An RNA of 177 nucleotides, treated with DMS and 2A3 and read out base by base. The RNA was probed in 150 mM KOAc, 10 mM MgCl2 and 150 mM bicine (pH 8.5) at 24 C. For 2A3 the reverse transcriptase was SuperScript II with manganese. The data come from the RNA Mapping Database (RMDB), libraries RFM100 and RFMREP.
RNA sequence: GGGAACGACUCGAGUAGAGUCGAAAAUUGUCCGAUUUGCACGGUGACUUGAUUACACUCUCUCAUUCAUGGUCACUUCCGAAGCGCUUUAGUGCCUUCCGUCCCUAAACCGCCAACAGCCAGAACGUAACGUAGUGACCUUCGGGUCACUACGUUAAAAAGAAACAACAACAACAAC
Reactivity to DMS in 0.01 (KOAc 150mM, MgCl2 10mM, bicine 150mM(pH8.5), 24C), signal-to-noise 2, nucleotides 027 to 126: u030u010g020u000c000c030g030a110u000u020u020g040c060a070c060g020g010u010g000a100c110u000u030g000a130u020u010a060c140a150c070u000c040u000c030u030c050a060u000u000c040a030u010g000g000u000c020a030c050u000u020c050c040g030a130a090g000c030g000c040u000u010u050a100g020u000g000c050c040u010u000c070c030g000u010c020c000c000u010a040a110a130c030c010g020c020c010a010a130c070a110g000c020c020a060g000a080a160c200g020
Reactivity to 2A3 in 0.01 (KOAc 150mM, MgCl2 10mM, bicine 150mM(pH8.5), 24C), signal-to-noise 3, nucleotides 027 to 126: u180u130g040u010c000c030g000a080u000u040u170g150c040a050c070g070g000u040g040a050c040u090u080g040a010u080u160a100c080a020c010u050c000u000c000u000c020a090u080u000c040a020u130g020g000u030c000a000c050u120u070c010c040g040a030a000g050c000g020c050u050u130u120a080g030u050g120c000c010u040u000c020c010g030u070c010c000c020u090a060a060a030c010c000g020c000c010a000a000c020a020g010c030c000a010g040a070a040c070g020